[RMDB]
RNA sequence: GGGAACGACUCGAGUAGAGUCGAAAAAAAGGACCGGAGGAGGGAGCUAGGAGCGUGGGGGGGCCGGUGGAGCCAUGGGAUGCUCCUCCCGAUUCCGUCCAUCCCCCCCCCCAGGAGGUCCCCCCAGAACCAGGUAGGUUCGCCUACCUGAAAAGAAACAACAACAACAAC
Reactivity to 2A3 in 0.01 (KOAc 150mM, MgCl2 10mM, bicine 150mM(pH8.5), 24C), signal-to-noise 4, nucleotides 027 to 129: a000a000a020g050g000a040c050c100g040g000a000g010g010a030g020g010g010a020g020c060u100a070g040g030a040g070c100g020u100g000g000g000g000g000g000g000c010c010g050g050u100g040g030a040g020c030c030a120u140g070g010g040a060u110g020c010u010c000c000u020c030c000c000g000a000u030u000c000c010g020u010c020c000a030u030c010c000c000c000c000c000c000c000c000c000a060g040g020a030g010g000u010c010c020c010c000c000c000a000g010a020a010c050
Reactivity to DMS in 0.01 (KOAc 150mM, MgCl2 10mM, bicine 150mM(pH8.5), 24C), signal-to-noise 4, nucleotides 027 to 129: a090a080a090g000g000a050c120c040g090g010a040g000g000a280g040g000g040a100g060c060u050a010g030g040a070g000c080g050u040g000g010g030g010g050g010g010c060c000g000g000u040g000g000a070g030c040c040a140u000g010g050g060a170u070g040c040u000c010c020u020c060c010c010g000a240u080u020c000c000g020u000c030c000a000u000c090c010c020c050c020c010c050c000c030c020a120g010g020a020g000g010u010c020c070c050c010c010c000a000g010a020a020c120
Structure probing data (2A3 and DMS) for a 170-nucleotide construct.
Source: RMDB library 15KLIB, as collected in RNAgym.
The RNA was probed in 150 mM KOAc, 10 mM MgCl2 and 150 mM bicine (pH 8.5) at 24 C.